The record gives the reactivity of an RNA of 207 nucleotides to DMS and 2A3. It was measured as part of the RMDB library OK3TST. The RNA was probed in 150 mM KOAc, 10 mM MgCl2 and 150 mM bicine (pH 8.5) at 24 C.
[RMDB]
RNA sequence: GGGAACGACUCGAGUAGAGUCGAAAAUGGUGUAGACCCUGUACCUAAUGAAGACCUACCCGGUCAAGGUAUCAGCCUUGAAGAGAUGGUAGCAAAAGAGCAGCAGCCCACCGAGUUCCUUAUAUUGGAGGUCGGGUACCAAACAGACACAGAGGCGUACUACGGGAAAAUUCGUUUUCCCGUAGUAAAAAGAAACAACAACAACAAC
Reactivity to DMS in 0.01 (KOAc 150mM, MgCl2 10mM, bicine 150mM(pH8.5), 24C), signal-to-noise 2, nucleotides 027 to 156: u000g020g010u000g040u010a130g000a060c020c000c010u000g000u000a080c040c020u000a060a160u000g010a120a110g000a070c080c020u010a160c050c000c030g000g020u000c010a060a030g020g030u000a050u010c260a160g000c000c000u000u000g020a080a090g000a140g010a090u010g020g010u010a050g040c050a070a070a070a070g000a120g030c000a050g010c000a120g000c010c010c040a050c010c000g010a100g000u010u020c040c000u000u000a140u000a140u010u000g010g000a060g010g020u010c000g010g010g000u000a030c040c000a050a100a100c070a100g020a130c020a070c060a030g000a040g030g000c060g020
Reactivity to 2A3 in 0.01 (KOAc 150mM, MgCl2 10mM, bicine 150mM(pH8.5), 24C), signal-to-noise 3, nucleotides 027 to 156: u110g000g000u040g020u040a040g060a130c010c000c000u010g050u060a030c010c030u110a150a130u180g090a110a060g010a030c000c000u020a020c010c000c050g020g030u020c020a000a010g020g000u070a170u300c040a040g130c010c010u020u020g040a050a050g070a010g020a150u120g010g000u020a010g030c040a060a050a040a000g060a000g020c010a000g000c020a010g000c000c010c010a010c030c020g000a050g210u000u020c020c000u110u050a170u060a090u230u170g000g020a010g000g070u040c010g030g000g010u040a070c010c000a000a150a050c020a050g090a050c020a000c010a080g070a040g050g000c060g020